[RMDB]
RNA sequence: GGGAACGACUCGAGUAGAGUCGAAAAGAUAUGGAGGGUCUCCCCACCGUCGCUACUGCAAUGAUGGGUACAGGCUCGGAAACGAGCCUGUACCUUGAGCAGUAGAUGACGAGGACCCUCCUAAGUCGUCCAUAUUUAGGUUCGCCUAAAUAUGGACAAAAGAAACAACAACAACAAC
Reactivity to DMS in 0.01 (KOAc 150mM, MgCl2 10mM, bicine 150mM(pH8.5), 24C), signal-to-noise 2, nucleotides 027 to 126: g030a140u010a100u000g020g000a020g000g040g010u010c000u000c140c030c030c080a300c150c000g010u000c020g000c000u000a010c010u000g000c010a230a170u010g010a140u000g010g010g010u000a000c000a000g000g010c030u000c000g010g000a040a090a210c000g020a030g040c000c000u000g010u000a000c000c000u000u000g000a130g000c030a000g000u000a020g000a010u000g000a010c000g000a120g020g000a010c000c000c000u010c000c000u000a010a090g010u010c170

This 177-nucleotide RNA was probed chemically with DMS.
High DMS reactivity at an A or C suggests that its Watson-Crick edge is free.
The data come from the RNA Mapping Database (RMDB), library TTRINS.
The RNA was probed in 150 mM KOAc, 10 mM MgCl2 and 150 mM bicine (pH 8.5) at 24 C.